About this RNA: Source: RMDB library OK3TST, as collected in RNAgym. This 207-nucleotide RNA was probed chemically with DMS and 2A3. The DMS profile rests on 2,265 reads. For 2A3 the reverse transcriptase was SuperScript II with manganese. For 2A3, 664 sequencing reads were counted. Reactivities are given for positions 27 through 156.
RNA sequence: GGGAACGACUCGAGUAGAGUCGAAAACUCAGGGCUCUCAAGGAUGAUGCUAAAUCUGCACUGCCUGUGCUGUCUAUAAAUGGAACAAUAAAGCCUAGAUGAUAAAACAUCUGUCCAUAGCUUGGUUUUUUAAAUAUUUUAAGCCCAGUGUUGAGAAUACUACUAAAUUAUUCGUAAUUUAGUAGUAAAAAGAAACAACAACAACAAC
Reactivity to DMS in 0.01 (KOAc 150mM, MgCl2 10mM, bicine 150mM(pH8.5), 24C), signal-to-noise 2, nucleotides 027 to 156: c020u000c020a190g000g020g040c040u000c050u010c070a080a150g000g040a070u010g020a060u000g010c040u000a020a200a120u020c040u010g000c100a050c070u000g040c020c020u000g020u000g010c000u010g030u000c090u010a220u010a090a080a100u010g020g050a050a010c030a090a100u010a120a090a070g010c060c090u050a030g000a080u000g010a090u000a070a070a150a200c050a070u000c000u010g020u000c040c040a140u000a130g010c020u000u020g030g010u000u000u000u000u000u050a000a050a180u010a070u010u000u000u000a040a160g010c000c000c020a090g040u000g000u010u000g010a180g000a250a220
Reactivity to 2A3 in 0.01 (KOAc 150mM, MgCl2 10mM, bicine 150mM(pH8.5), 24C), signal-to-noise 2, nucleotides 027 to 156: c010u010c020a010g000g000g010c000u010c000u020c060a030a050g040g000a050u110g010a020u050g060c040u060a150a060a110u050c010u080g030c030a010c050u100g080c000c060u070g010u020g010c020u030g020u000c020u070a090u040a110a050a070u100g020g000a000a110c060a040a200u100a150a080a000g000c000c010u020a000g000a020u030g030a030u070a080a100a000a000c000a010u000c010u050g050u020c020c000a080u080a100g010c030u020u000g000g060u080u110u020u020u080u230a020a130a080u120a060u060u140u060u060a010a040g010c020c040c020a000g040u080g010u100u150g100a090g050a060a150